[RMDB]
RNA sequence: GGGAACGACUCGAGUAGAGUCGAAAAGAAGUGGCAGGGAAAUGCCCCACAAGCUCGUUCUACCAACAUUUGUUUGGGUAGUUCGAGCGAUUAGUCUUGACGAGCGUCUUCUCGCGUCUUGACGAGAGGGAUCGAGCAGGUUCGCCUGUUCGAUCCCAAAAGAAACAACAACAACAAC
Reactivity to 2A3 in 0.01 (KOAc 150mM, MgCl2 10mM, bicine 150mM(pH8.5), 24C), signal-to-noise 2, nucleotides 027 to 126: g070a040a000g020u040g030g020c060a010g060g030g070a070a080a010u070g010c000c020c000c000a060c020a050a010g020c030u000c000g000u000u000c000u010a000c000c020a030a050c010a070u160u100u010g160u010u020u040g100g000g000u000a000g010u000u000c000g000a000g000c010g000a000u000u050a010g010u000c000u010u010g000a010c000g000a020g060c030g060u020c020u080u000c030u020c010g010c010g000u010c000u000u010g010a010c030g010a030g010a040
Reactivity to DMS in 0.01 (KOAc 150mM, MgCl2 10mM, bicine 150mM(pH8.5), 24C), signal-to-noise 2, nucleotides 027 to 126: g010a090a090g020u000g000g000c060a110g000g020g030a130a130a020u010g010c020c010c010c040a090c190a090a100g040c000u010c010g020u000u030c010u000a000c000c010a020a030c040a210u040u030u000g010u000u000u040g000g000g020u010a000g000u000u000c010g000a010g000c000g000a020u040u000a050g010u000c000u000u000g020a070c020g010a110g010c080g000u010c040u000u010c030u010c080g010c000g000u000c010u000u000g000a060c000g010a120g030a170